The record gives the reactivity of an RNA of 207 nucleotides to 2A3 and DMS. The RNA was probed in 150 mM KOAc, 10 mM MgCl2 and 150 mM bicine (pH 8.5) at 24 C. It was measured as part of the RMDB library OK3TST. DMS adducts were read by reverse transcription with MarathonRT. In probing experiments dimethyl sulfate is read out at A N1 and C N3, which are open when not base-paired. The 2A3 profile rests on 3,651 reads. Values cover nucleotides 27 to 156.
RNA sequence: GGGAACGACUCGAGUAGAGUCGAAAACAGGUCGAUCGCGAUGUCGUUGAGCGCAUCCACCCAAGACAGCGAGUCGUGCUCUUCGUUACGAAUCAAGUCGUCGGGCAGCGGAAGAUCGAACAGAGCGAGCUGACCGUCCUCCUCUACCGGCUCCUCGCUAAUACGCAUGCUUCGGCAUGCGUAUUAGAAAAGAAACAACAACAACAAC
Reactivity to 2A3 in 0.01 (KOAc 150mM, MgCl2 10mM, bicine 150mM(pH8.5), 24C), signal-to-noise 4, nucleotides 027 to 156: c070a020g040g010u020c010g020a060u020c010g000c010g020a020u030g020u030c030g040u040u060g070a090g140c040g000c050a060u000c020c030a020c010c000c000a010a020g020a020c040a030g030c030g050a010g030u030c010g020u010g030c020u020c050u190u170c130g090u100u180a060c030g010a040a040u070c030a070a040g030u020c010g050u050c060g010g050g000c080a050g030c010g030g020a080a040g030a110u150c070g010a050a050c010a010g040a000g020c020g010a010g040c130u060g090a020c020c000g020u030c000c010u020c020c000u010c020u020a020c000c010g020g000c020u000c010c000u030c020g000
Reactivity to DMS in 0.01 (KOAc 150mM, MgCl2 10mM, bicine 150mM(pH8.5), 24C), signal-to-noise 2, nucleotides 027 to 156: c010a100g000g000u000c030g000a030u010c010g000c020g000a190u010g020u000c040g020u000u040g020a100g000c070g000c080a100u010c030c050a080c000c030c010a090a110g010a050c030a120g010c130g010a070g000u000c010g040u000g020c020u010c110u000u010c160g020u020u010a100c010g010a090a080u010c050a130a300g040u000c020g010u000c040g040g040g020c020a050g000c000g020g030a080a200g000a040u000c030g000a080a100c040a060g000a300g010c000g010a040g040c050u020g010a100c020c020g020u000c030c020u000c000c000u000c010u000a080c000c000g010g000c050u010c000c010u020c050g030